[RMDB]
RNA sequence: GGGAACGACUCGAGUAGAGUCGAAAAACGGUCAUAUACGUAUGACCGAAUGAGCAUAACAGGGCCACCCCAAAGCGUUCACAUUGUGGCCCCUGUCAGAUUCUGGUAAAUCGGCGAGUUCUGCUAAAUUAGGUAACUCUCUUCGGAGAGUUACCAAGACUAGUUGGUUCUUCGGAACCAACUAGUCAAAAGAAACAACAACAACAAC
Reactivity to 2A3 in 0.01 (KOAc 150mM, MgCl2 10mM, bicine 150mM(pH8.5), 24C), signal-to-noise 1, nucleotides 027 to 156: a000c000g000g000u000c010a000u040a000u000a010c280g080u010a010u000g010a000c010c000g000a000a040u090g000a020g020c010a060u040a140a050c000a000g000g000g010c000c000a000c020c090c000c080a020a120a060g170c110g150u110u110c020a040c090a260u210u220g010u000g010g020c000c010c000c000u030g000u000c000a030g000a080u130u050c060u230g130g000u160a000a100a010u030c060g000g010c020g010a050g010u050u100c040u010g000c050u090a080a190a260u110u200a130g010g000u000a000a000c000u020c000u000c000u030u040c010g060g000a000g010a000g000u000u000a000c000c000a000a000
The data come from the RNA Mapping Database (RMDB), library M2RFPK. This 207-nucleotide RNA was probed chemically with 2A3. Conditions: 150 mM KOAc, 10 mM MgCl2 and 150 mM bicine (pH 8.5), 24 C. For 2A3, 498 sequencing reads were counted. For 2A3 the reverse transcriptase was SuperScript II with manganese.